[RMDB]
RNA sequence: GGGAACGACUCGAGUAGAGUCGAAAACGGGACCCCACCGUGGCUAGAGAGCAGAGGGAGAAGCUCGCUAGGAUACUACGCGUGCUCGUAGAGAAAGAGACGGUCACACCCGGCGACGUGGUGGUCGAGAUAGUUGGUGGUUCGCCACCAACUAUCUAAAAGAAACAACAACAACAAC
Reactivity to 2A3 in 0.01 (KOAc 150mM, MgCl2 10mM, bicine 150mM(pH8.5), 24C), signal-to-noise 2, nucleotides 027 to 126: c020g040g000g030a000c000c000c000c000a000c000c010g000u000g010g020c010u000a010g000a000g010a010g050c030a000g070a170g170g190g000a130g090a100a010g010c000u020c010g020c010u000a000g010g030a040u060a170c000u010a000c020g030c030g020u180g200c010u000c020g070u130a080g050a010g080a260a150a000g060a010g020a020c000g000g000u020c020a010c020a030c120c000c000g040g000c060g010a020c020g000u020g020g050u150g000g010u040c030g000
Reactivity to DMS in 0.01 (KOAc 150mM, MgCl2 10mM, bicine 150mM(pH8.5), 24C), signal-to-noise 2, nucleotides 027 to 126: c090g020g030g010a150c020c000c010c010a040c010c010g000u000g000g010c010u000a020g000a040g000a010g020c010a030g000a210g000g000g010a160g050a170a160g030c010u010c010g010c010u000a020g020g000a220u020a160c010u000a010c030g010c030g040u000g000c040u000c020g020u010a150g000a160g000a050a100a130g000a070g000a050c010g000g000u000c040a100c090a120c030c000c000g000g000c120g000a050c020g010u000g000g030u000g000g000u010c040g000
The record gives the reactivity of an RNA of 177 nucleotides to 2A3 and DMS. The reactions ran in a buffer of 150 mM KOAc, 10 mM MgCl2 and 150 mM bicine (pH 8.5), at 24 C. For DMS the reverse transcriptase was MarathonRT. The data come from the RNA Mapping Database (RMDB), library OK2TST.